[RMDB]
RNA sequence: GGGAACGACUCGAGUAGAGUCGAAAACAAUCAUUGGUUAAUCCCUUGAUUCCUUUGGGGAUUUUUGGGUUAAACUGAUUUUUGGGGCCCUUUGUUUCUUCUGCCUGGAGAAGUUUGACACCCAAAUAGAACUUCCUAUUUUCGAAUAGGAAGUUCUAAAAGAAACAACAACAACAAC
Reactivity to 2A3 in 0.01 (KOAc 150mM, MgCl2 10mM, bicine 150mM(pH8.5), 24C), signal-to-noise 4, nucleotides 027 to 126: c000a000a020u020c020a010u010u040g020g020u010u010a080a070u190c010c000c000u000u020g030a010u010u030c020c040u110u140u300g120g020g000g040a030u040u020u020u020u010g000g010g020u020u040a120a070a010c000u010g010a010u030u010u010u020u030g010g010g030g060c000c000c000u000u040u040g020u020u030u030c000u050u010c010u050g050c030c020u030g030g030a090g020a100a060g030u080u110u160g040a030c030a090c020c010c000a010a040a010u050